[RMDB]
This 177-nucleotide RNA was probed chemically with 2A3 and DMS. Conditions: 150 mM KOAc, 10 mM MgCl2 and 150 mM bicine (pH 8.5), 24 C. It was measured as part of the RMDB libraries RFM100 and RFMREP. For 2A3 the reverse transcriptase was SuperScript II with manganese.

RNA sequence: GGGAACGACUCGAGUAGAGUCGAAAAAAUACAGGCAAUUCACUAUGAACGAUUGUUAAUUUUGUUGGUGCAUCCUUGCUCUGUCUAUAUAGGUGGCUUGCCACUUGUAUAGCUUGUAAGGUGUAUCCUAAUAUGGUAGGUUCGCCUACCAUAUUAGAAAAGAAACAACAACAACAAC
Reactivity to 2A3 in 0.01 (KOAc 150mM, MgCl2 10mM, bicine 150mM(pH8.5), 24C), signal-to-noise 9, nucleotides 027 to 126: a000a000u220a020c060a020g050g010c020a030a040u110u100c040a050c110u190a120u300g070a170a040c070g120a150u020u030g030u060u100a120a120u070u080u050u080g090u030u060g010g000u010g000c010a060u300c010c000u000u000g010c010u040c040u090g200u070c000u000a000u000a000u000a000g000g010u000g000g010c060u050u130g050c000c000a000c000u000u000g000u000a000u000a000g000c000u010u010g000u000a000a000g010g000u000g000u000a000u000c000
Reactivity to DMS in 0.01 (KOAc 150mM, MgCl2 10mM, bicine 150mM(pH8.5), 24C), signal-to-noise 9, nucleotides 027 to 126: a050a040u020a040c080a090g010g010c060a060a050u000u000c040a100c140u010a090u020g020a080a070c130g010a120u010u010g000u000u010a060a090u010u000u000u000g010u010u000g010g010u000g000c010a010u030c000c000u000u000g000c000u010c090u000g000u040c000u000a000u000a010u000a000g000g010u000g000g000c030u020u000g010c000c000a000c010u000u000g010u000a000u000a010g010c010u000u000g000u000a010a010g000g020u000g000u000a010u010c030